[RMDB]
An RNA of 207 nucleotides, treated with DMS and 2A3 and read out base by base.
RNA sequence: GGGAACGACUCGAGUAGAGUCGAAAAACGAGGUACGCCUCGAAAAUAUGACCGGUGUCAUAGCCUCUAGCACACAGAGGUCGCGUGGUUUCAACUCCCCCCCUUUUCCGAGGGUAUCGGAAACCAAAAAACACAAUUUGGUUCGCCAAAUUGUGAACCAUAAGAUGUCCUUCGGGACAUCUUAUGGAAAAGAAACAACAACAACAAC
Reactivity to DMS in 0.01 (KOAc 150mM, MgCl2 10mM, bicine 150mM(pH8.5), 24C), signal-to-noise 1, nucleotides 027 to 156: a050c050g010a060g070g020u000a050c100g030c020c010u000c050g040a130a060a100a140u030a030u000g000a060c010c090g040g000u010g030u000c010a080u000a040g010c010c010u000c050u000a110g020c190a180c150a120c040a060g010a000g010g060u010c020g000c100g030u010g070g010u010u010u000c040a160a150c020u000c000c000c000c000c000c000c020u000u000u000u000c020c000g000a030g040g000g010u000a060u010c020g020g010a040a020a030c160c030a000a060a050a040a050a130c000a030c010a040a010u000u000u020g000g030u000u000c300g010c030c010a020a010a020u010u000g030u000g000a000a100
Reactivity to 2A3 in 0.01 (KOAc 150mM, MgCl2 10mM, bicine 150mM(pH8.5), 24C), signal-to-noise 3, nucleotides 027 to 156: a010c000g000a010g000g010u050a050c120g100c010c000u000c010g040a080a030a020a050u200a080u100g010a030c040c030g110g040u160g100u180c100a080u040a050g020c010c000u030c030u040a070g070c070a040c010a020c010a150g010a000g050g000u020c000g020c020g040u110g020g060u020u080u210c090a080a070c100u030c020c020c000c000c000c000c010u040u090u010u020c010c000g000a010g000g000g010u080a000u010c000g000g000a000a000a000c020c010a040a050a030a030a030a000c000a000c000a000a000u000u000u000g010g010u010u030c080g000c060c000a000a000a000u000u000g000u000g000a010a000
Record summary:
The data come from the RNA Mapping Database (RMDB), library M2RFPK. As a SHAPE reagent, 2A3 marks flexible, mostly unpaired nucleotides at the ribose 2'-OH.